Structure probing data (2A3) for a 207-nucleotide construct. The RNA was probed in 150 mM KOAc, 10 mM MgCl2 and 150 mM bicine (pH 8.5) at 24 C. The 2A3 profile rests on 1,216 reads.
RNA sequence: GGGAACGACUCGAGUAGAGUCGAAAACUUCUUCGACUCGGACCGGCUCAUCUCGACAAGAGGCGGCGGUCCUCAGUGCUCUUACUCUUUUCUGUAAAGAGGAGACUGCUGGACUCGCCGCCCAAGUUCGAGCAUGGGCCAAUUCCGAACGAAGGGAGCUUGACUUAACGUUCGCGUUAAGUCAAGCAAAAGAAACAACAACAACAAC
Reactivity to 2A3 in 0.01 (KOAc 150mM, MgCl2 10mM, bicine 150mM(pH8.5), 24C), signal-to-noise 2, nucleotides 027 to 156: c010u060u060c000u010u010c020g100a100c010u000c010g000g000a010c020c090g010g030c010u010c000a000u000c000u000c000g000a010c010a030a110g100a190g070g000c010g000g000c000g000g000u010c020c000u010c000a030g000u090g190c010u000c030u100u240a280c010u000c000u050u120u070u030c190u210g300u300a010a030a020g000a020g010g010a000g010a000c000u000g120c090u040g020g000a030c070u060c260g000c000c000g010c020c000c000a000a000g000u010u000c010g000a010g000c040a010u000g000g000g000c000c000a000a000u020u000c000c000g000a020a000c000g020a010a000g030g000g040a050